[RMDB]
Background
The data come from the RNA Mapping Database (RMDB), libraries RFM100 and RFMREP. Chemical mapping of a 177-nucleotide RNA with DMS and 2A3.
RNA sequence: GGGAACGACUCGAGUAGAGUCGAAAAGCGCGGCAACGCGCAGAGAUUGCGAGGCGACCGGGGCCAGCUGGGCCCCAGCGGCUCGCCCCUCGGCGGGGCCGGGAGCCGCGCCAGUCGGAGCCCCUGGGUUUAUCACCAAAUUCGUUUGGUGAUAAACAAAAGAAACAACAACAACAAC
Reactivity to DMS in 0.01 (KOAc 150mM, MgCl2 10mM, bicine 150mM(pH8.5), 24C), signal-to-noise 4, nucleotides 027 to 126: g000c010g020c000g010g010c230a090a130c020g010c010g030c010a040g010a110g010a090u020u010g000c020g000a060g010g000c020g000a150c030c030g000g000g000g020c000c010a200g010c100u020g010g000g020c040c040c020c010a020g020c010g000g000c000u000c030g000c000c100c090c040u010c220g010g020c210g000g000g020g010c180c300g000g010g010a120g020c010c030g000c020g010c060c040a020g000u010c030g000g020a200g010c020c000c000c020u000g000g000
Reactivity to 2A3 in 0.01 (KOAc 150mM, MgCl2 10mM, bicine 150mM(pH8.5), 24C), signal-to-noise 4, nucleotides 027 to 126: g020c010g000c000g010g030c050a090a050c030g000c010g000c040a000g010a000g000a040u120u200g020c040g010a030g040g020c010g020a080c030c040g000g000g010g020c000c020a060g080c100u110g020g020g040c030c000c000c020a010g000c000g000g000c000u000c000g010c000c000c000c010u060c020g190g030c090g010g000g030g000c030c040g120g040g020a020g000c000c000g000c000g000c000c010a010g020u050c040g030g030a060g010c020c010c000c010u070g100g030

Annotation: The RNA was probed in 150 mM KOAc, 10 mM MgCl2 and 150 mM bicine (pH 8.5) at 24 C.